[RMDB]
RNA sequence: GGGAACGACUCGAGUAGAGUCGAAAAUCAGUGACAGCGGGAGCAGGCCUCCCCAUAUACAUGGCAUUGGGCAGCGUCAUCGCCCAAGUUAGUGCACGCUAUGCCAGCGGCCGCCUUCAAGCACCAACAAGUUCACCACAUUCGUGUGGUGAACUUGAAAAGAAACAACAACAACAAC
Reactivity to 2A3 in 0.01 (KOAc 150mM, MgCl2 10mM, bicine 150mM(pH8.5), 24C), signal-to-noise 1, nucleotides 027 to 126: u090c000a000g050u030g060a060c040a070g000c210g060g010g000a010g050c100a080g020g140c020c010u060c000c020c050c010a020u110a010u010a050c120a020u130g050g000c030a030u000u150g030g020g080c070a040g030c020g260u100c030a120u130c010g040c020c000c010a000a000g000u010u130a080g010u030g060c060a080c100g000c020u050a000u120g040c020c040a010g010c010g010g020c010c010g020c000c030u010u020c060a100a000g000c010a020c030c020a030a020
Reactivity to DMS in 0.01 (KOAc 150mM, MgCl2 10mM, bicine 150mM(pH8.5), 24C), signal-to-noise 2, nucleotides 027 to 126: u000c090a100g000u020g030a060c030a060g070c150g000g020g010a060g050c090a190g000g000c080c030u020c020c020c010c070a060u000a100u030a050c270a080u000g000g010c020a300u000u000g010g020g020c020a020g000c140g020u000c100a060u000c090g000c000c000c020a010a080g000u010u010a090g030u000g020c050a080c070g000c090u000a030u000g020c060c060a090g000c070g030g000c050c040g000c070c050u000u010c040a060a100g020c000a090c040c070a070a120